Background
Structure probing data (DMS and 2A3) for a 177-nucleotide construct. Values cover nucleotides 27 to 126. DMS (dimethyl sulfate) methylates the pairing face of unpaired adenines and cytosines. The reactions ran in a buffer of 150 mM KOAc, 10 mM MgCl2 and 150 mM bicine (pH 8.5), at 24 C. For 2A3, 1,262 sequencing reads were counted. Reactivities are rounded to 0.1 and cut off at 0 and 3. 2A3 adducts were read by reverse transcription with SuperScript II with manganese.
RNA sequence: GGGAACGACUCGAGUAGAGUCGAAAAACCAAAGCGAAUGGGGGGGUCGGUGUUUGGCAUUGCCGCCAGCCCAGCCCGAGCGCAUGGACCUUCCCGGACUGGGCAUCAGCCUGCGCCGCGUCCGACACCGUGUAAGGUUGUUCGCAACCUUACACGGAAAAGAAACAACAACAACAAC
Reactivity to DMS in 0.01 (KOAc 150mM, MgCl2 10mM, bicine 150mM(pH8.5), 24C), signal-to-noise 2, nucleotides 027 to 126: a100c050c000a060a100a110g030c040g020a090a050u000g000g000g000g020g010g030g000u010c050g020g020u010g020u010u000u010g040g010c040a160u010u010g030c090c040g000c050c090a120g010c000c000c010a070g010c000c010c020g000a070g000c270g020c140a060u000g000g000a120c050c080u000u010c010c000c020g000g040a060c050u000g020g000g010c030a100u020c110a090g000c060c050u000g020c060g010c010c050g010c120g000u010c000c030g000a090c120a100
Reactivity to 2A3 in 0.01 (KOAc 150mM, MgCl2 10mM, bicine 150mM(pH8.5), 24C), signal-to-noise 1, nucleotides 027 to 126: a010c060c010a070a010a000g060c050g020a120a090u100g060g000g020g000g000g010g000u010c020g010g000u060g000u060u130u060g050g010c070a060u000u240g040c040c020g050c010c020a000g000c030c000c000a020g140c000c000c000g010a000g040c080g000c050a040u060g050g020a080c050c000u040u090c020c010c000g010g020a050c040u020g010g040g000c020a030u040c080a080g040c000c020u060g050c040g010c030c010g040c040g050u060c030c000g050a000c000a060